[RMDB]
RNA sequence: GGGAACGACUCGAGUAGAGUCGAAAAUGAGAAGUCGUCAGUAGUUCGACGUGAGCAGAAGCCCGCCUCGAUAUGCUAUGUGGACGAGGGCAUGCCCAAGACACACCUUUACCCUAGCGGGACGCAACCACUGUUAUCGAUUCGUCGAUAACAGUGGAAAAGAAACAACAACAACAAC
Reactivity to DMS in 0.01 (KOAc 150mM, MgCl2 10mM, bicine 150mM(pH8.5), 24C), signal-to-noise 4, nucleotides 027 to 126: u010g000a090g010a150a120g020u000c030g000u000c000a090g010u000a050g010u010u000c060g000a030c070g030u000g020a080g010c020a100g010a130a170g000c020c020c010g000c020c030u000c080g000a100u010a060u010g000c080u010a090u000g010u000g000g000a090c050g020a210g020g000g010c080a050u000g000c010c010c020a070a170g000a060c040a050c040a030c070c050u000u000u000a130c010c010c020u000a080g010c050g000g000g010a060c130g010c150a110a150
Reactivity to 2A3 in 0.01 (KOAc 150mM, MgCl2 10mM, bicine 150mM(pH8.5), 24C), signal-to-noise 4, nucleotides 027 to 126: u150g010a060g030a120a030g090u060c020g000u010c030a030g080u120a020g060u190u090c030g010a020c010g030u030g020a000g000c030a020g020a260a010g060c000c020c000g000c020c010u060c040g020a030u010a030u250g020c030u030a040u090g300u050g160g010a090c020g000a050g010g020g000c030a040u120g030c030c000c010a000a020g050a010c030a000c000a020c020c000u050u090u150a110c010c010c000u000a010g020c020g020g000g000a010c030g000c030a030a030